[RMDB]
This 207-nucleotide RNA was probed chemically with 2A3 and DMS.
For 2A3 the reverse transcriptase was SuperScript II with manganese.
The 2A3 profile rests on 2,114 reads.
Reactivities are given for positions 27 through 156.
RNA sequence: GGGAACGACUCGAGUAGAGUCGAAAAACUGCAUCUACGGAUGCAGAACUACGUUCAUCCAAUUUAUUUGGACGCAUGAAAUGAGAAUAGGGAACGGGAUUCUCAUACGCAGGCUACGGCCUGCGAAAAAACUCCUUAUGCUUCGGCAUAAGGAGAAUCCAUAUAAUCAGUUCGCUGAUUAUAUGGAAAAAGAAACAACAACAACAAC
Reactivity to 2A3 in 0.01 (KOAc 150mM, MgCl2 10mM, bicine 150mM(pH8.5), 24C), signal-to-noise 3, nucleotides 027 to 156: a000c000u000g000c000a000u000c000u020a020c210g120g000a000u000g000c000a000g000a000a010c030u100a030c000g000u010u020c010a010u000c010c000a020a010u100u230u110a160u060u070u160g010g010a020c010g000c020a060u200g070a100a150a060u010g010a030g000a010a000u010a020g060g000g000a000a010c010g000g000g000a000u010u000c000u000c000a010u020a020c010g010c000a000g010g000c000u030a080c240g130g000c000c000u000g060c000g010a040a000a000a000a000a010c000u000c000c000u000u000a000u000g000c010u030u040c120g070g010c000a000u000a000a000g000g000a000g000a000a000
Reactivity to DMS in 0.01 (KOAc 150mM, MgCl2 10mM, bicine 150mM(pH8.5), 24C), signal-to-noise 2, nucleotides 027 to 156: a160c000u000g020c000a000u000c010u040a110c290g050g020a010u000g000c000a000g010a050a100c020u000a000c020g000u000u000c000a160u010c080c130a120a210u000u000u000a180u030u010u000g020g010a020c000g010c010a130u010g020a070a170a070u000g010a140g010a170a060u000a090g000g000g000a090a060c030g020g000g000a300u000u020c000u040c010a080u000a070c030g000c010a040g020g000c010u010a130c300g050g000c000c000u000g000c000g000a000a010a020a060a040a050c000u010c000c000u000u000a000u000g030c000u000u020c300g060g000c000a010u000a000a000g020g010a000g000a000a010